The record gives the reactivity of an RNA of 177 nucleotides to DMS and 2A3.

RNA sequence: GGGAACGACUCGAGUAGAGUCGAAAAGUGCCGAUUGAAAUUCAUGGGAGCCUCUCCAUAAUGGAUGAACGCCGCGGUAGUACGCGCAGUCGCGACGUAAACGCUCUGUCUUCCCGUUCAGGCCUCAAAAUAAUGCACCUUUCGAGGUGCAUUAUUUAAAAGAAACAACAACAACAAC
Reactivity to DMS in 0.01 (KOAc 150mM, MgCl2 10mM, bicine 150mM(pH8.5), 24C), signal-to-noise 5, nucleotides 027 to 126: g020u010g020c010c000g000a170u000u010g010a080a130a080u000u000c070a040u000g000g000g000a070g010c090c060u000c040u000c000c010a120u000a090a060u000g000g020a040u010g010a080a070c070g010c040c030g010c030g010g000u000a110g020u010a060c130g010c100g010c040a210g010u000c040g010c010g020a030c040g010u010a050a060a110c130g000c010u000c020u000g010u000c070u000u000c010c010c010g020u010u000c110a100g010g020c020c100u010c120a070
Reactivity to 2A3 in 0.01 (KOAc 150mM, MgCl2 10mM, bicine 150mM(pH8.5), 24C), signal-to-noise 1, nucleotides 027 to 126: g020u040g030c020c000g060a080u050u130g060a120a180a120u150u020c040a040u070g030g000g020a030g030c000c020u130c000u000c000c000a040u170a200a100u210g040g000a060u050g040a050a010c020g000c030c000g000c010g030g000u030a050g070u060a050c050g050c010g000c100a010g060u030c000g000c010g000a040c000g010u030a020a070a100c030g000c000u010c020u030g030u010c000u010u000c000c000c000g000u020u040c040a050g050g010c000c050u080c040a020

For DMS, 4,902 sequencing reads were counted. For 2A3 the reverse transcriptase was SuperScript II with manganese.